[RMDB]
RNA sequence: GGGAACGACUCGAGUAGAGUCGAAAAAUUGCAUUUUUCCUCUUGAAACACAAAACAUUUGAGUUUGGAAAGUCUUUCUGGAACAUGUGUGUUGAGGUUACUGGAGAAUGGGGAGAGGGGAGGCUGGUGUCAGAUCUGGCUUUUCUACACACAAUGGAUCGCUGUAGGUAUUCGUACCUACAGCGAUAAAAGAAACAACAACAACAAC
Reactivity to 2A3 in 0.01 (KOAc 150mM, MgCl2 10mM, bicine 150mM(pH8.5), 24C), signal-to-noise 1, nucleotides 027 to 156: a000u110u060g010c060a090u140u020u140u130u000c110c000u150c070u040u170g040a030a130a030c050a000c080a050a130a150a000c020a000u190u160u180g020a060g090u010u060u120g070g010a040a050a050g070u080c000u030u140u050c090u100g010g050a030a060c000a080u020g040u010g010u000g000u140u130g050a100g010g020u100u060a050c010u080g010g000a070g040a030a200u170g030g000g110g000a110g010a050g020g000g000g000a000g010g000c140u020g030g010u070g040u060c030a000g000a050u060c010u000g000g060c000u090u100u000u000c040u020a010c030a000c010a000c050a020a090u140g050g000